[RMDB]
RNA sequence: GGGAACGACUCGAGUAGAGUCGAAAAUUGGGGAGUACACUCGAGGAGUGGAAGGCGGGGAGACGGGGAUCCCGGGCUUACCCACGGGAACUGCUGGGUUCCCCUGAUGUCCAGUCCCUCCCCGCUCAUACAAAGUAGUUCGCUACUUUGAAAAGAAACAACAACAACAAC
Reactivity to 2A3 in 0.01 (KOAc 150mM, MgCl2 10mM, bicine 150mM(pH8.5), 24C), signal-to-noise 9, nucleotides 027 to 129: u140u080g020g000g010g010a020g030u060a030c020a020c040u020c040g100a090g060g030a010g020u040g000g060a080a070g030g000c010g000g000g000g000a020g000a010c040g010g000g010g000a000u010c000c010c000g030g010g000c040u080u160a180c000c000c020a050c110g040g000g010a040a040c080u120g040c020u050g030g020g000u010u010c000c000c000c000u030g040a060u070g100u040c030c020a010g040u030c020c000c000u010c000c000c000c000g000c000u030c010a090u140a050
Reactivity to DMS in 0.01 (KOAc 150mM, MgCl2 10mM, bicine 150mM(pH8.5), 24C), signal-to-noise 8, nucleotides 027 to 129: u030u010g000g050g000g000a040g030u030a090c130a000c000u030c040g010a100g010g020a050g010u030g030g020a080a070g030g040c070g000g000g000g000a010g020a190c230g000g020g040g020a000u020c020c000c040g010g000g010c070u020u060a110c030c010c030a120c210g000g030g040a020a060c110u020g010c040u000g020g010g020u000u000c020c000c020c030u010g030a060u020g010u040c040c040a120g000u030c030c090c000u000c000c000c000c000g040c000u000c040a090u060a130